[RMDB]
RNA sequence: GGGAACGACUCGAGUAGAGUCGAAAAAUUUUUUUGGUCUAUAUUAUUGGCAACCAAAAGCUGUUCCAAUUCUUUUCCAAAAUGUGUAGCAAACAAGGUUCUACAUUUGUUAACUUGCAAUAGACUGACUAAAUACCGUAUUCGUACGGUAUUUAGUAAAAGAAACAACAACAACAAC
Reactivity to 2A3 in 0.01 (KOAc 150mM, MgCl2 10mM, bicine 150mM(pH8.5), 24C), signal-to-noise 1, nucleotides 027 to 126: a020u100u070u010u010u010u030u130g030g010u010c050u020a090u000a060u300u060a040u120u130g010g020c050a010a040c000c000a060a110a070a140g010c100u050g030u060u030c010c000a000a040u020u080c020u020u040u030u030c020c020a030a060a060a140u100g030u000g000u070a030g020c030a070a050a100c010a100a100g090g000u130u070c040u090a060c030a070u000u000u050g040u010u030a090a100c050u020u110g030c010a040a030u080a050g030a020c050u040g000
Reactivity to DMS in 0.01 (KOAc 150mM, MgCl2 10mM, bicine 150mM(pH8.5), 24C), signal-to-noise 5, nucleotides 027 to 126: a030u000u000u000u000u000u000u000g010g000u000c010u000a070u000a080u010u010a070u010u000g000g000c120a060a040c030c050a060a050a080a170g020c140u000g000u010u000c020c010a040a110u000u000c080u000u010u000u000c030c020a060a070a060a070u010g010u000g010u000a030g010c110a050a050a060c120a090a090g020g010u000u000c060u000a050c060a090u000u000u000g000u000u010a060a050c090u000u000g010c100a060a050u000a030g000a060c050u000g010
Structure probing data (2A3 and DMS) for a 177-nucleotide construct. For 2A3 the reverse transcriptase was SuperScript II with manganese. Source: RMDB library OK2TST, as collected in RNAgym. The RNA was probed in 150 mM KOAc, 10 mM MgCl2 and 150 mM bicine (pH 8.5) at 24 C.